Structure probing data (DMS and 2A3) for a 177-nucleotide construct. For 2A3 the reverse transcriptase was SuperScript II with manganese. Reactivities are rounded to 0.1 and cut off at 0 and 3.
[RMDB]
RNA sequence: GGGAACGACUCGAGUAGAGUCGAAAAUCGAUGCCUACGCACAGCGGGUGUACCAGGCGAACCGAGCGGCCGGAAGUUGAUCGCUCCCGGCGACAUCGCGCCGCGCCGCGACAGUGAACACGAGCUCUCCUUGGAGCUCGUUCGCGAGCUCCAAGGAAAAAGAAACAACAACAACAAC
Reactivity to DMS in 0.01 (KOAc 150mM, MgCl2 10mM, bicine 150mM(pH8.5), 24C), signal-to-noise 2, nucleotides 027 to 126: u030c070g020a040u020g030c020c000u010a070c170g000c030a010c100a070g000c060g000g020g050u040g030u060a040c090c060a040g000g030c010g020a040a080c090c040g000a300g000c050g000g000c050c010g010g020a040a050g030u000u000g000a100u010c110g010c000u000c060c110c070g000g000c000g000a020c040a070u010c010g020c170g010c000c020g020c110g080c000c000g030c060g000a080c290a090g000u000g000a120a080c150a030c080g010a060g000c030u000c030
Reactivity to 2A3 in 0.01 (KOAc 150mM, MgCl2 10mM, bicine 150mM(pH8.5), 24C), signal-to-noise 3, nucleotides 027 to 126: u140c030g020a010u100g040c000c010u050a030c070g040c000a020c030a070g100c070g020g120g000u020g000u040a070c010c080a030g060g000c020g020a010a050c040c010g000a020g030c010g010g000c020c000g000g010a030a050g040u070u080g100a300u060c030g000c010u070c030c050c060g050g010c000g020a020c000a020u010c000g020c020g000c080c000g030c060g020c040c000g040c000g030a020c030a020g050u040g080a110a020c030a020c090g010a030g060c000u000c000